[RMDB]
The data come from the RNA Mapping Database (RMDB), library TTRDES. Structure probing data (2A3 and DMS) for a 177-nucleotide construct. 2A3 adducts were read by reverse transcription with SuperScript II with manganese. For DMS, 3,512 sequencing reads were counted. The 2A3 profile rests on 5,923 reads.
RNA sequence: GGGAACGACUCGAGUAGAGUCGAAAAAAAAAGAUAUGGAAUCCGCAGGGCGAAGAACAUGGGUCACAGUAUGUCGGAAACGACAUAUCACAGCCCAUGGGAGCCUCAGGGAUUCCUAAGUCAAAAAGAUAAGUGUUAAGUUCGCUUAACACUUAUCAAAAGAAACAACAACAACAAC
Reactivity to 2A3 in 0.01 (KOAc 150mM, MgCl2 10mM, bicine 150mM(pH8.5), 24C), signal-to-noise 1, nucleotides 027 to 126: a040a010a010a020a000g000a010u010a010u050g020g000a000a000u010c010c020g050c130a040g030g000g000c030g230a300a010g000a020a010c010a010u000g010g000g020u100c050a020c010a130g000u010a000u000g000u000c000g010g000a020a010a010c000g010a000c000a000u000a010u010c020a050c080a000g010c020c010c000a000u000g010g020g010a010g010c000c000u070c020a010g040g000g000a010u010u000c000c000u000a000a000g000u000c020a060a080a040a050a060
Reactivity to DMS in 0.01 (KOAc 150mM, MgCl2 10mM, bicine 150mM(pH8.5), 24C), signal-to-noise 3, nucleotides 027 to 126: a040a060a080a120a100g010a040u010a060u010g000g010a020a010u010c000c010g000c190a290g000g000g010c000g000a050a110g000a100a210c020a000u000g000g030g010u000c080a080c220a300g000u000a000u000g020u000c000g000g000a020a010a040c000g020a020c000a000u020a000u000c050a100c170a300g000c020c010c000a000u000g010g000g010a030g020c000c000u000c160a200g000g000g010a000u000u000c000c000u000a010a040g010u010c010a040a050a050a090a130